[RMDB]
The record gives the reactivity of an RNA of 177 nucleotides to DMS and 2A3. The 2A3 profile rests on 1,174 reads. For DMS, 1,427 sequencing reads were counted.
RNA sequence: GGGAACGACUCGAGUAGAGUCGAAAAUGGCCGCAUACAGUGACCUGACCUGGCAUUUAACCGAUCGUUUUGAUAUCGGCGGCGGCGUGCGCUUCUCGCAUGAUAAAUCCAGUACACAAUAUCACGGCGUAGGAAGUCAGUUCGCUGACUUCCUACGAAAAGAAACAACAACAACAAC
Reactivity to DMS in 0.01 (KOAc 150mM, MgCl2 10mM, bicine 150mM(pH8.5), 24C), signal-to-noise 1, nucleotides 027 to 126: u010g010g030c010c040g020c050a150u010a110c170a090g030u010g000a110c060c010u000g000a070c100c030u010g010g000c070a060u000u000u010a120a170c030c000g010a040u000c020g020u000u020u030u010g000a130u000a030u000c060g000g010c040g000g000c030g000g020c010g010u000g000c030g010c260u000u010c120u000c020g020c010a060u000g000a140u000a050a040a130u010c040c000a040g010u010a050c080a060c070a080a120u000a110u000c050a070c180g000g010
Reactivity to 2A3 in 0.01 (KOAc 150mM, MgCl2 10mM, bicine 150mM(pH8.5), 24C), signal-to-noise 2, nucleotides 027 to 126: u040g060g050c020c010g000c030a040u210a140c120a060g010u020g030a090c010c040u040g050a060c000c060u020g030g000c030a060u090u050u090a090a040c020c020g000a070u060c040g040u090u000u280u210g100a030u060a010u130c040g000g010c000g020g020c000g040g010c000g010u020g000c090g010c040u150u120c070u050c030g050c020a040u060g040a050u130a080a070a010u060c050c000a010g050u060a050c100a020c000a130a090u120a040u160c060a030c110g000g000